[RMDB]
RNA sequence: GGGAACGACUCGAGUAGAGUCGAAAAUGAAAGGUGUGUGAGCGAGGCGGGCGGAGGAUGAGGCCGUGCCCGGGCUCUGGCUGCAGCCGCCCGGGGACACGCCGUGCACCCUCGGGCUCCGGAAAAAUGCUCAUAUCAAGUUCGCUUGAUAUGAGCAAAAAGAAACAACAACAACAAC
Reactivity to DMS in 0.01 (KOAc 150mM, MgCl2 10mM, bicine 150mM(pH8.5), 24C), signal-to-noise 2, nucleotides 027 to 126: u020g000a060a070a070g010g000u000g020u000g000u010g010a080g010c050g000a080g000g020c050g020g010g020c020g010g010a040g010g010a040u010g010a120g000g010c050c090g020u000g020c000c010c000g000g010g010c000u010c170u000g000g000c060u020g010c220a130g030c040c070g000c000c010c000g000g000g010g020a050c020a020c090g010c020c010g010u010g010c030a030c040c020c000u000c010g000g020g000c030u010c020c010g000g010a010a050a050a080a100